RNA sequence: GGGAACGACUCGAGUAGAGUCGAAAAGAUAUGGACGAUCAGGUUUCGAUAAGUCGUCAUCGGAAACGAUGAUACGACUUUUGACGAAACCGGAUCGUCCUAAGUCAAAACUUCGCUUCGGCGAAGACAUGAUGGUCAUCUUCGGAUGACCAUCAUGAAAAGAAACAACAACAACAAC
Reactivity to DMS in 0.01 (KOAc 150mM, MgCl2 10mM, bicine 150mM(pH8.5), 24C), signal-to-noise 3, nucleotides 027 to 126: g000a050u000a300u010g000g000a020c010g020a000u010c000a030g000g010u000u000u000c010g020a150u010a020a020g000u000c000g030u000c000a010u000c010g000g000a120a080a290c010g020a030u010g000a160u010a040c050g000a020c000u000u000u000u010g000a230c150g000a000a030a000c000c000g000g010a010u000c010g010u000c000c000u000a000a040g000u020c070a060a110a120a200c010u000u000c000g000c000u010u020c280g020g000c000g020a000a010g020a210
Reactivity to 2A3 in 0.01 (KOAc 150mM, MgCl2 10mM, bicine 150mM(pH8.5), 24C), signal-to-noise 2, nucleotides 027 to 126: g040a010u090a060u200g000g000a000c000g010a010u020c020a030g050g030u020u010u030c070g020a070u020a100a020g000u020c020g010u010c000a010u000c000g020g010a100a040a040c010g000a010u030g010a040u050a180c030g000a000c000u040u050u040u090g210a130c040g000a000a040a000c000c010g000g000a000u000c010g000u000c000c000u010a000a010g000u000c020a000a030a060a140c000u010u010c010g040c010u040u040c300g230g000c020g010a000a010g000a120